This 177-nucleotide RNA was probed chemically with 2A3 and DMS.
The 2A3 profile rests on 40,322 reads.
For DMS, 18,765 sequencing reads were counted.
Conditions: 150 mM KOAc, 10 mM MgCl2 and 150 mM bicine (pH 8.5), 24 C.
2A3 adducts were read by reverse transcription with SuperScript II with manganese.
Source: RMDB library RFMREP, as collected in RNAgym.
RNA sequence: GGGAACGACUCGAGUAGAGUCGAAAACGCUUUCGAUGAUGUAGGGGCAACCCCGACACCGCACAACCCCGAUGGGUCAGCGGUCUUGAGCGGGCAUUUGCCUUCGAUGAGAGACCGUGUUAGCGUUGAUUAUGUUAUAGUUCGCUAUAACAUAAUCAAAAGAAACAACAACAACAAC
Reactivity to 2A3 in 0.01 (KOAc 150mM, MgCl2 10mM, bicine 150mM(pH8.5), 24C), signal-to-noise 9, nucleotides 027 to 126: c010g010c000u030u070u060c070g120a120u090g010a020u100g070u130a060g020g010g010g010c070a030a070c020c000c000c000g050a030c020a030c030c040g050c020a050c040a080a060c010c000c000c030g130a160u240g060g020g010u020c020a010g010c000g000g000u000c010u050u050g010a010g010c020g000g010g000c020a100u070u100u300g000c000c000u070u100c050g160a250u070g020a040g000a000g000a010c010c020g020u030g040u050u050a020g010c020g010u010u050
Reactivity to DMS in 0.01 (KOAc 150mM, MgCl2 10mM, bicine 150mM(pH8.5), 24C), signal-to-noise 9, nucleotides 027 to 126: c030g020c020u000u000u000c050g020a100u000g020a060u000g020u000a140g010g010g010g010c140a080a090c270c000c010c020g010a070c080a080c070c040g000c090a080c210a160a070c020c010c000c240g000a120u010g020g010g010u000c080a200g000c000g000g000u000c030u010u000g010a140g020c030g000g000g010c070a270u000u000u010g000c000c010u000u010c030g010a120u010g000a250g000a030g000a030c030c010g020u000g010u000u000a030g010c050g020u000u000